The record gives the reactivity of an RNA of 207 nucleotides to 2A3 and DMS. DMS adducts were read by reverse transcription with MarathonRT. The data come from the RNA Mapping Database (RMDB), library OK3TST. For 2A3, 1,481 sequencing reads were counted.
RNA sequence: GGGAACGACUCGAGUAGAGUCGAAAAACGCUUUGGACGGAGGACAACCGGCUUGGAUUAGUCGAGCUAAACCGUUUGCUACUCGAAUUAGGAGGAGGGUGAUCGUAAAUUGUCUCAUUCUAAACGUUGCAUCUUGCGUCAACACUGUAAGGCCGCAUCGCUAGAUAAGGUUCGCCUUAUCUAGCGAAAAAGAAACAACAACAACAAC
Reactivity to 2A3 in 0.01 (KOAc 150mM, MgCl2 10mM, bicine 150mM(pH8.5), 24C), signal-to-noise 3, nucleotides 027 to 156: a000c060g000c080u050u010u050g060g010a070c070g060g000a010g000g040a020c000a030a050c130c070g000g030c050u020u040g050g040a090u050u110a070g060u080c060g010a000g000c030u050a080a040a070c000c040g060u030u090u060g030c010u050a090c010u040c010g080a140a140u170u030a130g050g000a000g010g050a010g000g040g000u030g020a040u040c010g090u130a060a090a060u040u070g020u000c010u010c050a060u130u000c020u120a000a080a070c050g000u010u040g040c020a080u010c040u090u090g000c010g010u020c020a020a090c080a030c080u090g030u080a060a000g030g020c010c010g030c030a020
Reactivity to DMS in 0.01 (KOAc 150mM, MgCl2 10mM, bicine 150mM(pH8.5), 24C), signal-to-noise 1, nucleotides 027 to 156: a040c090g000c070u000u000u000g070g020a170c080g010g030a070g020g010a060c010a050a080c060c020g000g000c010u000u010g000g000a200u000u000a100g060u010c080g010a090g010c010u010a060a100a080c070c050g030u000u000u020g000c120u020a060c030u010c020g010a060a120u010u000a070g020g060a130g010g020a110g010g030g020u000g020a050u000c030g000u000a100a070a210u010u020g000u000c020u000c070a160u000u000c060u010a050a060a070c070g020u000u000g010c010a180u000c080u000u000g000c030g020u000c020a050a060c070a080c060u000g000u000a050a000g000g030c000c020g000c060a250